[RMDB]
RNA sequence: GGGAACGACUCGAGUAGAGUCGAAAAGGUCGUGUUUAUUUAUCUGGCGGCGUUAGUGUUCGCUUACUUGUUCCUGGUGGCCCAGUAUGAAAGCUGGAGUAUACCGCUGGUGGUGAUCCUCUCGGUGGAAGCGACCUAAAUUCGUUUAGGUCGCUUCAAAAGAAACAACAACAACAAC
Reactivity to DMS in 0.01 (KOAc 150mM, MgCl2 10mM, bicine 150mM(pH8.5), 24C), signal-to-noise 1, nucleotides 027 to 126: g010g010u000c030g040u010g000u000u010u010a110u000u000u000a040u020c080u000g010g030c080g040g000c050g030u010u000a040g020u020g010u010u010c090g010c060u010u000a050c060u000u000g050u020u010c020c020u000g030g040u000g000g010c030c010c010a020g010u010a070u010g010a100a160a220g000c020u010g020g010a170g010u010a080u000a060c050c020g010c070u000g020g020u010g020g010u010g000a080u000c030c040u000c070u000c060g030g040u010g010